An RNA of 177 nucleotides, treated with 2A3 and DMS and read out base by base. 2A3 adducts were read by reverse transcription with SuperScript II with manganese. The DMS profile rests on 3,010 reads. Conditions: 150 mM KOAc, 10 mM MgCl2 and 150 mM bicine (pH 8.5), 24 C. Source: RMDB library TTRDEL, as collected in RNAgym.

[RMDB]
RNA sequence: GGGAACGACUCGAGUAGAGUCGAAAAGAUAUGGAUUACUACCCACCGCUAACCUAUCGAAGAACUCGGAAACGAGGGAGAUAGGAGGCGAGGUAAUCCUAAGUCAAAAGAUGUCUUCGGACAUCAAGACAUGUAUAGGGUUCGCCCUAUACAUGUCAAAAGAAACAACAACAACAAC
Reactivity to 2A3 in 0.01 (KOAc 150mM, MgCl2 10mM, bicine 150mM(pH8.5), 24C), signal-to-noise 5, nucleotides 027 to 126: g100a060u220a150u300g010g010a000u010u020a020c000u160a140c010c020c010a030c030c000g000c020u070a210a270c020c000u030a010u020c030g170a300a030g020a060a040c000u000c010g010g050a060a070a050c010g000a010g020g000g000a040g010a000u010a000g000g000a010g030g000c000g010a010g000g000u010a000a010u000c010c000u020a140a040g160u180c110a020a040a010a180g010a000u000g000u000c000u040u150c300g090g020a000c000a000u000c010a000a010
Reactivity to DMS in 0.01 (KOAc 150mM, MgCl2 10mM, bicine 150mM(pH8.5), 24C), signal-to-noise 4, nucleotides 027 to 126: g040a040u000a200u000g000g020a010u010u000a000c000u000a080c020c030c010a300c160c010g010c040u020a110a140c010c000u020a000u000c010g000a130a100g000a130a150c000u000c000g000g000a070a070a210c010g030a020g000g000g000a050g010a010u000a000g010g010a300g000g010c000g000a050g020g010u000a000a000u000c000c000u000a050a080g010u020c130a130a060a120a100g010a000u000g020u000c000u000u010c190g010g000a010c010a000u000c010a070a110